Structure probing data (DMS and 2A3) for a 177-nucleotide construct. For 2A3, 639 sequencing reads were counted. Values cover nucleotides 27 to 126. 2A3 adducts were read by reverse transcription with SuperScript II with manganese.
RNA sequence: GGGAACGACUCGAGUAGAGUCGAAAAUGUGUCUGUGUAUGUGUGAGGAUUAAAUUGUGUAUGUGUGAGGACUAAUUGCCACUACUGGAUCCUCAAAGUGGUAAGAAGUGUUCUUAUUAAUAAUGACACGAAUAGAUGCUUUCGAGCAUCUAUUCGUAAAAGAAACAACAACAACAAC
Reactivity to DMS in 0.01 (KOAc 150mM, MgCl2 10mM, bicine 150mM(pH8.5), 24C), signal-to-noise 3, nucleotides 027 to 126: u010g020u000g000u010c020u000g010u010g010u000a040u000g030u000g010u010g020a070g030g010a070u000u010a070a080a110u000u000g010u020g010u000a070u000g020u000g030u000g000a040g000g010a040c040u000a040a180u000u010g000c010c010a010c010u050a120c110u000g000g000a130u000c050c040u010c030a040a100a060g030u000g010g010u010a030a010g000a130a100g020u000g000u000u000c020u010u000a070u010u010a070a120u010a030a070u010g000a180c140
Reactivity to 2A3 in 0.01 (KOAc 150mM, MgCl2 10mM, bicine 150mM(pH8.5), 24C), signal-to-noise 1, nucleotides 027 to 126: u100g020u000g020u060c010u000g060u000g010u000a020u020g090u060g020u010g010a010g040g010a020u090u090a020a060a130u200u100g050u050g110u060a110u110g110u020g040u040g010a030g000g000a000c030u050a000a110u010u050g000c000c010a000c000u060a040c020u040g100g070a150u240c040c020u130c090a020a040a000g020u010g020g020u020a020a010g060a120a010g140u120g030u030u060c000u040u050a090u020u150a010a120u100a050a110u180g030a030c010